The record gives the reactivity of an RNA of 177 nucleotides to 2A3 and DMS. Conditions: 150 mM KOAc, 10 mM MgCl2 and 150 mM bicine (pH 8.5), 24 C. The 2A3 profile rests on 1,119 reads. Reactivities are given for positions 27 through 126.
[RMDB]
RNA sequence: GGGAACGACUCGAGUAGAGUCGAAAAGUCAUUUCUAAAUCACCACCGUAUGACAUGGUGCCGAUAUCAGCCAGUUCGAACGCCCCCGGCGUAACGACUGUUUCAUAUAUCGUCUGUCCACGCUGAGCUGGAGUGGGUAUUUCGAUACCCACUCCAGAAAAGAAACAACAACAACAAC
Reactivity to 2A3 in 0.01 (KOAc 150mM, MgCl2 10mM, bicine 150mM(pH8.5), 24C), signal-to-noise 1, nucleotides 027 to 126: g040u010c010a090u000u110u000c070u120a100a070a130u070c020a030c060c000a000c000c000g090u130a140u180g050a080c000a050u080g050g000u020g080c050c030g020a020u030a020u070c020a000g000c010c030a020g020u070u140c030g000a040a000c000g080c000c020c010c000c120g000g000c030g000u010a040a040c020g020a010c000u040g030u000u110u070c090a060u070a000u000a050u220c000g060u000c040u020g040u110c020c040a040c050g010c030u020g030a010g140
Reactivity to DMS in 0.01 (KOAc 150mM, MgCl2 10mM, bicine 150mM(pH8.5), 24C), signal-to-noise 2, nucleotides 027 to 126: g000u010c050a070u000u000u030c040u000a060a130a070u000c100a040c100c030a070c080c040g030u000a070u010g020a030c080a050u000g010g020u000g010c180c000g000a040u000a060u000c110a130g000c210c030a020g020u000u010c080g000a220a050c050g000c010c030c120c110c160g040g030c000g000u010a030a100c160g010a010c010u000g000u000u000u000c120a100u010a220u000a060u000c060g010u000c050u010g010u010c020c120a050c100g030c020u000g000a160g010